[RMDB]
RNA sequence: GGGAACGACUCGAGUAGAGUCGAAAAAGUCGGUGCGCGACAUCCUCGAGCGCAGGAUGAAGGUCAAGGAAGAGGUGGAACGGAAGGAGAUCGAAGUCUUGGUCCACGGGUACAACAUCCUCGUCCCUGAGUUGUGACGAUUCGUCGUCACAACUCAAAAAGAAACAACAACAACAAC
Reactivity to DMS in 0.01 (KOAc 150mM, MgCl2 10mM, bicine 150mM(pH8.5), 24C), signal-to-noise 1, nucleotides 027 to 126: a110g000u010c010g000g000u000g000c010g060c040g000a120c040a050u000c050c030u010c160g000a060g000c090g000c060a060g010g000a030u000g000a100a100g030g000u000c030a000a010g000g000a050a150g000a080g020g000u000g000g000a020a130c110g000g000a020a080g040g020a100g020a020u000c060g010a080a050g000u000c030u000u010g000g050u020c020c060a030c120g010g010g010u020a030c030a080a120c190a120u000c010c020u030c100g000u000c000c000c030
Reactivity to 2A3 in 0.01 (KOAc 150mM, MgCl2 10mM, bicine 150mM(pH8.5), 24C), signal-to-noise 1, nucleotides 027 to 126: a000g040u030c050g050g040u090g030c220g040c010g010a020c000a000u090c000c020u030c050g040a090g020c020g000c050a020g040g000a010u020g060a060a000g110g000u050c030a000a070g060g000a070a050g020a010g130g090u070g050g000a080a070c080g000g120a020a010g090g000a120g020a090u070c060g080a100a000g060u030c020u080u180g100g010u010c000c010a030c070g030g000g050u180a050c040a040a010c000a060u000c010c010u000c010g010u050c000c020c000